Structure probing data (2A3 and DMS) for a 177-nucleotide construct.
RNA sequence: GGGAACGACUCGAGUAGAGUCGAAAAGAGCUGAAGUACAGCAAGAACGACGGAAUCCUUGGCAAAGCGUCGAAGAUAAGCGUGCCGACUGCCAAGGAUUAACGGCACGCGAGGCGAAGACGCCAGAAGUGCACUCGAUAUUCGUAUCGAGUGCACUAAAAGAAACAACAACAACAAC
Reactivity to 2A3 in 0.01 (KOAc 150mM, MgCl2 10mM, bicine 150mM(pH8.5), 24C), signal-to-noise 4, nucleotides 027 to 126: g120a020g000c060u050g020a140a050g200u130a170c010a000g000c010a020a080g080a140a010c010g050a020c020g060g080a050a010u000c010c000u000u000g000g000c030a040a050a120g100c070g090u110c140g100a050a020g080a080u240a130a110g000c030g010u020g010c020c010g120a210c070u060g000c000c000a000a000g050g000a000u000u000a010a010c010g000g030c010a000c000g000c020g010a060g000g000c030g040a150a110g030a120c050g010c000c000a040g080a120
Reactivity to DMS in 0.01 (KOAc 150mM, MgCl2 10mM, bicine 150mM(pH8.5), 24C), signal-to-noise 3, nucleotides 027 to 126: g010a100g000c000u000g000a080a170g000u070a150c020a040g020c010a070a070g000a180a060c120g000a150c160g000g020a080a010u000c000c010u000u000g000g000c000a120a090a130g020c090g000u010c040g000a060a160g000a130u030a070a100g010c060g010u000g040c010c000g020a120c180u000g000c010c030a040a030g000g040a030u000u000a020a050c000g010g020c000a000c000g010c000g000a080g000g000c070g000a260a130g000a150c090g000c040c160a090g010a150
Conditions: 150 mM KOAc, 10 mM MgCl2 and 150 mM bicine (pH 8.5), 24 C.
2A3 adducts were read by reverse transcription with SuperScript II with manganese.